[RMDB]
RNA sequence: GGGAACGACUCGAGUAGAGUCGAAAAUGCGCGUGCUGCAACCGCCGCCUAGCCCACCGGCGCCGAUCGCGCCGAACCCGGCGGCCAGACCGAACGUCCGCCGUGAGAUGCCGGUCAUCGGGCUGCAAUCCUGGUCCAUUUUCGAAUGGACCAGGAUAAAAGAAACAACAACAACAAC
Reactivity to 2A3 in 0.01 (KOAc 150mM, MgCl2 10mM, bicine 150mM(pH8.5), 24C), signal-to-noise 2, nucleotides 027 to 126: u140g030c070g000c030g090u150g010c020u060g020c040a060a040c030c020g010c000c000g010c000c020u040a050g000c010c000c000a020c040c010g000g000c020g010c030c060g120a140u160c070g000c000g020c000c000g010a030a030c000c010c020g040g000c000g010g000c000c020a040g030a030c000c050g040a080a070c040g030u010c000c000g020c020c020g040u070g060a190g020a010u170g070c070c020g000g040u030c010a020u120c030g010g000g000c010u010g000c010a040
Reactivity to DMS in 0.01 (KOAc 150mM, MgCl2 10mM, bicine 150mM(pH8.5), 24C), signal-to-noise 2, nucleotides 027 to 126: u040g040c080g000c040g000u050g000c030u070g040c180a040a230c250c040g000c000c050g000c000c000u000a010g000c020c000c000a170c250c060g000g000c000g040c040c170g050a040u020c180g000c100g000c000c050g000a050a030c020c050c020g000g020c020g000g030c020c100a130g000a070c110c090g050a150a250c100g010u030c000c030g010c050c000g110u010g030a140g000a080u020g000c000c020g000g000u000c060a090u000c160g050g000g000c000u050g020c040a050